[RMDB]
RNA sequence: GGGAACGACUCGAGUAGAGUCGAAAAGCGACUGCGGUAACAACGUCGUCUUGAGCGUCCGUGCGGAGGGUCAAGCAGGCUGUGCUAUUGAGCUCCGAAAUCACCACUCUCGCGUGCCGACCAUGUCGUACCUGAAUACGUUCGCGUAUUCAGGUACAAAAGAAACAACAACAACAAC
Reactivity to DMS in 0.01 (KOAc 150mM, MgCl2 10mM, bicine 150mM(pH8.5), 24C), signal-to-noise 3, nucleotides 027 to 126: g020c030g000a040c010u000g000c300g020g000u010a080a080c050a050a300c120g010u010c010g000u000c020u000u000g010a080g020c060g010u000c050c040g020u010g020c060g000g000a020g010g020g010u000c040a080a070g030c060a070g000g000c110u010g030u000g000c070u000a120u010u010g000a130g000c010u030c010c010g010a080a080a050u000c060a050c080c030a050c030u000c020u000c040g020c080g010u010g000c010c040g000a110c080c020a060u000g010u000c120
Reactivity to 2A3 in 0.01 (KOAc 150mM, MgCl2 10mM, bicine 150mM(pH8.5), 24C), signal-to-noise 3, nucleotides 027 to 126: g010c010g030a020c030u030g000c000g000g100u120a100a050c030a030a040c050g010u020c000g000u040c030u070u080g030a020g010c070g050u000c020c000g050u080g070c050g010g040a030g050g000g060u050c010a020a000g010c030a030g190g000c080u140g020u080g120c020u050a100u210u150g040a030g000c000u000c010c010g040a100a010a010u110c020a000c030c000a040c020u020c000u020c020g060c010g020u040g000c000c020g040a030c010c020a040u110g110u150c060
Conditions: 150 mM KOAc, 10 mM MgCl2 and 150 mM bicine (pH 8.5), 24 C.
This 177-nucleotide RNA was probed chemically with DMS and 2A3.
For DMS the reverse transcriptase was MarathonRT.
The 2A3 profile rests on 3,714 reads.
The DMS profile rests on 1,828 reads.